[RMDB]
RNA sequence: GGGAACGACUCGAGUAGAGUCGAAAAUCACAUCAGCGCGACUACGCUCUCGCUGCCUAAGCGACGGCUAGUCUGUCAGACCGGGAACGCCCUCGGCCCGGACCCUGGCAUCAGCUAGAGGGAUCCACCGAUGAGUCCGGUCGCGGGACUCCUCGGGCACUCGAUAAUCGUUCGCGAUUAUCGAGUGAAAAGAAACAACAACAACAAC
Reactivity to 2A3 in 0.01 (KOAc 150mM, MgCl2 10mM, bicine 150mM(pH8.5), 24C), signal-to-noise 1, nucleotides 027 to 156: u070c010a050c050a100u160c070a090g150c080g000c030g130a040c010u040a060c160g030c000u080c000u000c020g040c010u030g080c010c100u100a050a020g000c000g000a000c010g020g000c000u000a000g030u010c010u010g000u000c010a000g010a050c020c000g000g000g000a000a050c000g030c000c000c000u010c010g000g050c020c000c000g010g030a050c080c080c000u000g030g020c040a040u130c050a090g050c050u160a010g010a020g020g050g010a000u100c030c020a010c000c000g000a010u010g000a000g000u000c000c010g180g140u250c100g050c060g120g000g000a000c000u000c000c000u000c000g000g000g000
Annotation:
Source: RMDB library ARCHII, as collected in RNAgym. Chemical mapping of a 207-nucleotide RNA with 2A3. Conditions: 150 mM KOAc, 10 mM MgCl2 and 150 mM bicine (pH 8.5), 24 C.